[RMDB]
RNA sequence: GGGAACGACUCGAGUAGAGUCGAAAACUUGGCCCAGCGCUGGUAGUAGGCGAUGUGCGACUCGAGCGUACGGACCAGCUCCCCGUUGCGCCCCUCCGGACGCAGGGCGGCGUCCACCUCGAAAAAGCAUACAAUAACCCUUCGGGGUUAUUGUAUGAAAAGAAACAACAACAACAAC
Reactivity to DMS in 0.01 (KOAc 150mM, MgCl2 10mM, bicine 150mM(pH8.5), 24C), signal-to-noise 9, nucleotides 027 to 126: c060u000u000g020g000c000c020c010a100g010c040g020c030u000g000g020u010a060g010u000a130g010g010c020g000a130u010g010u000g010c020g010a090c050u000c050g000a060g010c080g010u000a070c140g010g010a060c030c060a190g010c040u000c270c020c020c050g010u010u010g020c090g000c010c000c010c090u010c190c150g010g010a020c020g030c030a100g000g000g010c140g020g010c020g010u000c010c010a170c070c020u000c030g010a030a090a090a100a130g010
Reactivity to 2A3 in 0.01 (KOAc 150mM, MgCl2 10mM, bicine 150mM(pH8.5), 24C), signal-to-noise 6, nucleotides 027 to 126: c010u060u090g060g000c000c020c010a040g020c030g020c050u070g050g070u110a070g020u030a060g070g050c030g060a120u110g030u070g050c020g050a040c050u040c090g050a070g060c050g030u060a080c070g010g020a020c030c020a040g010c010u060c010c010c000c010g150u130u110g010c010g020c010c000c000c020u080c040c070g000g020a010c000g010c020a030g030g020g030c030g030g000c000g000u000c000c010a020c010c020u050c040g030a110a010a000a030a000g040